[RMDB]
Notes
An RNA of 207 nucleotides, treated with 2A3 and read out base by base. Conditions: 150 mM KOAc, 10 mM MgCl2 and 150 mM bicine (pH 8.5), 24 C. The data come from the RNA Mapping Database (RMDB), library M2RFPK. For 2A3, 534 sequencing reads were counted.
RNA sequence: GGGAACGACUCGAGUAGAGUCGAAAAUUGAUAAUUUGUUGUGUAACUUCAUUUAAAUGAAUUGAAACAAACUUAAUACAAGUGGAUGUAGGAUAACCGUCCGUCCUUUACAUUGGUAUAAAAGUGAACGACACAGACCUCUUCGGAGGUCUGUGAAGCAAAUCUACUUGUUCGCAAGUAGAUUUGCAAAAGAAACAACAACAACAAC
Reactivity to 2A3 in 0.01 (KOAc 150mM, MgCl2 10mM, bicine 150mM(pH8.5), 24C), signal-to-noise 1, nucleotides 027 to 156: u070u020g030a060u090a280a040u060u090u110g020u020u000g000u000g010u030a040a000c020u040u080c100a080u100u120u300a200a300a080u080g000a000a060u110u070g080a080a080a070c010a040a100a000c060u080u090a080a000u060a080c010a030a120g020u030g070g010a080u090g060u050a020g030g010a040u020a120a070c050c020g010u020c010c050g030u020c010c040u040u150u030a090c020a020u030u090g090g000u060a020u030a020a150a050a030g050u090g050a050a060c040g070a020c010a000c000a000g000a000c000c000u010c010u000u080c170g030g000a000g000g000u000c000u000g020u020g000a000a010